[RMDB]
RNA sequence: GGGAACGACUCGAGUAGAGUCGAAAAGACAAUGUAUUCAGGAACACAUGUUUCCAAGCUGGUCAGCCUGCACGCCAAGCAGCACUGAAGCAGCAGCUGCAGGCAGAGUUUUUGACAGCUGCCAGAGCAACCUCCGAAAAUUCGUUUUCGGAGGUUGAAAAGAAACAACAACAACAAC
Reactivity to DMS in 0.01 (KOAc 150mM, MgCl2 10mM, bicine 150mM(pH8.5), 24C), signal-to-noise 3, nucleotides 027 to 126: g010a060c060a070a050u020g010u010a070u000u020c090a140g030g000a070a060c130a050c120a050u010g010u010u000u000c010c020a140a080g020c020u010g000g000u000c050a090g000c090c000u000g010c010a030c300g020c020c040a120a070g010c000a060g010c020a180c160u010g000a050a100g010c040a050g030c020a100g000c030u000g020c010a020g000g000c010a030g000a050g010u000u000u000u000u000g000a120c050a040g010c010u000g000c050c060a120g000a140g010
Reactivity to 2A3 in 0.01 (KOAc 150mM, MgCl2 10mM, bicine 150mM(pH8.5), 24C), signal-to-noise 2, nucleotides 027 to 126: g040a020c060a030a110u090g020u040a130u130u170c120a070g000g090a090a020c040a000c020a160u050g010u010u040u010c000c000a010a010g040c020u040g020g100u080c040a020g020c020c000u000g040c010a030c170g010c000c000a110a080g020c020a020g020c010a020c130u180g060a230a050g000c030a010g000c010a010g000c020u010g010c010a010g000g020c010a010g020a000g000u040u040u040u140u130g070a040c010a000g010c010u030g000c010c020a040g040a000g090
The record gives the reactivity of an RNA of 177 nucleotides to DMS and 2A3. The RNA was probed in 150 mM KOAc, 10 mM MgCl2 and 150 mM bicine (pH 8.5) at 24 C. For 2A3, 2,102 sequencing reads were counted.